RNA sequence: GGGAACGACUCGAGUAGAGUCGAAAAACAGACAUGUCCAACUUUCUCUCCAGUUCUUAGCUCAGAACUUUAGUUGUACUCUGCUUGAGGGGAAGAAGGCUCCUGCUCUGCUGUGUAGGUAGUCAUAGGAAUUGUAUUCUUAAUGUACAGGCACUAAGACAGGGUGUAAUUUCGAUUACACCCUGUCAAAAGAAACAACAACAACAAC
Reactivity to 2A3 in 0.01 (KOAc 150mM, MgCl2 10mM, bicine 150mM(pH8.5), 24C), signal-to-noise 3, nucleotides 027 to 156: a000c050a020g070a020c030a080u130g040u070c030c000a020a010c000u010u060u000c020u000c010u000c020c040a050g000u140u020c070u100u140a030g040c040u040c180a000g020a070a100c000u150u140u130a050g010u020u080g050u080a050c030u010c050u100g050c000u040u050g020a000g030g000g000g000a000a030g010a020a040g020g000c000u030c020c000u090g030c060u030c010u050g130c040u100g000u000g010u060a100g150g080u050a030g050u040c030a030u040a020g030g040a020a040u050u130g060u160a070u030u080c020u060u130a170a110u060g070u070a020c020a030g160g000c040a020c090u090a040a070
Reactivity to DMS in 0.01 (KOAc 150mM, MgCl2 10mM, bicine 150mM(pH8.5), 24C), signal-to-noise 1, nucleotides 027 to 156: a060c040a060g020a060c080a070u010g000u010c080c010a060a200c010u000u000u000c000u010c030u000c040c060a070g000u000u010c100u000u000a130g040c050u000c160a110g020a070a070c070u000u000u000a040g010u040u010g010u000a080c090u000c040u000g040c020u000u010g010a000g000g010g060g010a060a050g000a070a200g010g010c010u000c020c010u010g040c090u000c030u010g030c000u000g030u010g030u010a010g000g000u000a090g010u000c030a030u000a100g030g040a070a000u000u000g020u020a300u010u000c030u000u000a100a050u010g030u000a070c000a040g000g010c010a040c130u010a050a270